[RMDB]
RNA sequence: GGGAACGACUCGAGUAGAGUCGAAAAGUGAUUAUACGAUUACAGUCUUUGUUACUGUCAACCUUGCAAAAGUUUGCACUUAUGCCAUCUUUGCUUACUCACCACAGCUUACACUUGUGUUUCCGGACUCAUCUUUAUCGUUCGCGAUAAAGAUGAGAAAAGAAACAACAACAACAAC
Reactivity to DMS in 0.01 (KOAc 150mM, MgCl2 10mM, bicine 150mM(pH8.5), 24C), signal-to-noise 2, nucleotides 027 to 126: g010u000g000a090u000u010a090u000a100c110g000a070u020u020a040c000a010g000u000c040u000u010u000g000u040u010a010c020u010g030u010c140a030a090c020c030u010u010g000c120a070a090a090a110g030u000u000u000g010c040a140c130u000u000a070u000g010c040c040a070u000c040u000u000u000g020c050u000u000a040c120u000c080a070c010c030a020c090a090g020c120u000u000a080c120a070c170u000u000g030u000g020u000u000u000c000c010g000g010a300
Reactivity to 2A3 in 0.01 (KOAc 150mM, MgCl2 10mM, bicine 150mM(pH8.5), 24C), signal-to-noise 3, nucleotides 027 to 126: g020u020g030a070u060u200a100u060a180c060g030a040u020u080a030c000a000g020u010c050u070u280u230g080u120u050a030c010u010g020u030c040a040a040c010c000u020u050g030c030a010a010a070a120g010u000u060u040g030c020a030c050u120u060a050u200g000c010c000a030u050c030u020u030u060g000c020u030u030a040c000u020c020a040c000c020a040c010a020g070c020u090u150a030c070a040c060u040u150g020u010g000u030u020u000c000c000g000g020a010
Source information:
Conditions: 150 mM KOAc, 10 mM MgCl2 and 150 mM bicine (pH 8.5), 24 C. Structure probing data (DMS and 2A3) for a 177-nucleotide construct. For DMS, 1,187 sequencing reads were counted.